[RMDB]
RNA sequence: GGGAACGACUCGAGUAGAGUCGAAAAUAGAACCAAAACCAACAGUAUCGUGGUAUCAUACGCUCCAAAGCAACUAGAAGAAAGGCCUUAUUUGACCAUUGGAUUCAGUAUUUUUUCUCCAAGUAGCCAUCUAGCGUCUGUUCGCAGACGCUAGAUGAAAAGAAACAACAACAACAAC
Reactivity to 2A3 in 0.01 (KOAc 150mM, MgCl2 10mM, bicine 150mM(pH8.5), 24C), signal-to-noise 1, nucleotides 027 to 126: u100a000g040a020a030c020c010a000a020a020a030c050c030a010a040c040a050g070u050a050u150c070g050u020g050g040u050a070u090c050a010u030a040c030g020c070u050c030c030a030a050a110g010c000a000a060c030u020a030g040a100a000g080a110a250a020g070g000c000c000u110u100a220u110u120u090g030a010c000c000a040u040u120g010g010a030u060u070c010a000g010u070a110u060u010u020u020u030u000c030u030c020c000a060a070g030u020a050g100c040
Reactivity to DMS in 0.01 (KOAc 150mM, MgCl2 10mM, bicine 150mM(pH8.5), 24C), signal-to-noise 1, nucleotides 027 to 126: u020a040g000a050a170c020c020a020a110a120a110c070c040a070a100c080a110g010u000a050u010c130g040u000g000g010u010a020u000c060a060u000a040c130g000c030u000c080c070a020a030a090g010c050a030a050c080u030a030g000a150a030g010a040a080a050g000g000c030c050u000u000a070u010u000u010g020a040c050c020a130u010u020g000g000a100u010u000c090a060g040u020a020u000u000u000u000u000u000c030u000c050c050a000a090g020u000a020g010c100